[RMDB]
RNA sequence: GGGAACGACUCGAGUAGAGUCGAAAAAGCUCUGCCCUUGAUUAUCCUGCCACCCGCAGGGGCCCCUCUGUCAGCACUUGGGGGGUGGGUGGUGGAGGGUGGCCCGUAAGUUUGAGGGCUCAAAGGCAAUAUCUCCUUACUUCGGUAAGGAGAUAUUAAAAGAAACAACAACAACAAC
Reactivity to DMS in 0.01 (KOAc 150mM, MgCl2 10mM, bicine 150mM(pH8.5), 24C), signal-to-noise 4, nucleotides 027 to 126: a110g010c060u010c030u000g010c010c010c010u010u000g010a100u010u010a070u000c030c000u000g010c010c030a040c040c010c020g030c100a150g010g000g010g010c030c020c000c010u010c020u000g010u010c120a150g020c170a050c100u000u000g000g000g010g020g020g030u000g000g020g010u000g000g000u010g010g000a050g010g010g030u000g000g000c010c000c000g000u010a090a140g010u000u020u010g010a160g010g000g010c010u010c040a020a050a070g000g000c050
Reactivity to 2A3 in 0.01 (KOAc 150mM, MgCl2 10mM, bicine 150mM(pH8.5), 24C), signal-to-noise 3, nucleotides 027 to 126: a000g060c020u020c060u050g010c000c020c020u030u020g100a110u120u220a060u190c000c000u010g010c020c010a010c000c020c020g060c110a090g030g030g030g050c010c030c010c000u030c030u060g170u110c080a070g050c080a110c170u180u160g000g000g010g000g000g000u050g040g000g020u020g000g030u010g040g050a030g010g010g040u060g030g000c010c000c010g050u100a010a140g040u050u140u220g090a070g020g000g020c010u020c020a020a030a010g050g000c030